[RMDB]
RNA sequence: GGGAACGACUCGAGUAGAGUCGAAAAGCUUUCUAAGUGUAUGGCCGCGAAUGAGGCACUUCUGACGCCAUUGCUGGUGGUUAUCCAAGCAGAAAGCGAUUGGUUUGUCACCACUGUAGACGAGGAAGGGAUUUUACGGUUUCGACCGUAAAAUCCCAAAAGAAACAACAACAACAAC
Reactivity to 2A3 in 0.01 (KOAc 150mM, MgCl2 10mM, bicine 150mM(pH8.5), 24C), signal-to-noise 1, nucleotides 027 to 126: g000c000u000u050u050c000u000a190a160g060u000g010u110a200u050g080g000c030c000g060c160g010a080a040u080g140a210g030g100c000a000c000u300u150c090u180g180a300c090g000c000c000a040u090u060g030c060u000g010g000u000g000g010u040u000a090u000c030c000a040a000g080c000a000g240a040a000a000g050c060g010a010u020u020g000g000u000u000u130g000u000c000a050c000c000a050c000u040g000u130a010g000a100c040g000a130g280g090a030a030
Conditions: 150 mM KOAc, 10 mM MgCl2 and 150 mM bicine (pH 8.5), 24 C. Chemical mapping of a 177-nucleotide RNA with 2A3. It was measured as part of the RMDB library OK1LIB. For 2A3, 333 sequencing reads were counted.